[RMDB]
An RNA of 207 nucleotides, treated with 2A3 and DMS and read out base by base.
RNA sequence: GGGAACGACUCGAGUAGAGUCGAAAACAGCUAGUAACUGGAGGGAGUUCCUAGCCACGUUGUCUCUCAAUCGUCGCAAGUCUGCAAGGACUCCAUUAUCAUCUUCCAUUUACAAACGAGGAGACGUAUACUGUUCUGUGUACACUACUGAUUGACAGAAACUUAAGAGUUUCGACUCUUAAGUUUCAAAAGAAACAACAACAACAAC
Reactivity to 2A3 in 0.01 (KOAc 150mM, MgCl2 10mM, bicine 150mM(pH8.5), 24C), signal-to-noise 9, nucleotides 027 to 156: c020a010g020c010u030a010g000u020a020a020c020u020g080g040a060g060g080g020a000g030u040u040c000c000u010a010g010c010c020a080c080g010u030u040g070u020c010u000c000u000c030a020a080u040c040g060u030c030g020c110a090a050g050u040c050u050g030c040a040a090g020g000a010c000u020c040c010a110u140u140a080u130c050a050u020c010u070u000c000c030a100u070u140u190a140c100a050a150a020c070g020a090g020g010a010g010a020c030g050u060a030u030a070c060u050g050u100u020c010u040g070u010g020u050a020c060a020c050u080a030c030u090g020a080u080u040g030a050c070a090
Reactivity to DMS in 0.01 (KOAc 150mM, MgCl2 10mM, bicine 150mM(pH8.5), 24C), signal-to-noise 2, nucleotides 027 to 156: c040a040g020c030u020a230g010u000a020a020c020u000g010g020a160g030g000g010a300g010u010u000c010c010u010a100g050c000c060a050c190g040u010u010g020u000c020u000c040u020c040a150a100u010c060g000u020c060g020c030a040a110g010u000c030u010g020c040a060a080g020g010a080c010u000c010c030a090u000u000a100u000c050a000u000c000u000u000c030c000a120u000u000u000a300c110a050a060a030c080g010a120g050g010a070g010a030c050g010u010a050u000a030c070u010g050u010u000c010u010g000u000g040u010a030c040a020c020u000a040c050u000g000a070u000u020g020a060c070a100
For DMS, 3,915 sequencing reads were counted. The RNA was probed in 150 mM KOAc, 10 mM MgCl2 and 150 mM bicine (pH 8.5) at 24 C. 2A3 adducts were read by reverse transcription with SuperScript II with manganese. DMS (dimethyl sulfate) methylates the pairing face of unpaired adenines and cytosines. DMS adducts were read by reverse transcription with MarathonRT.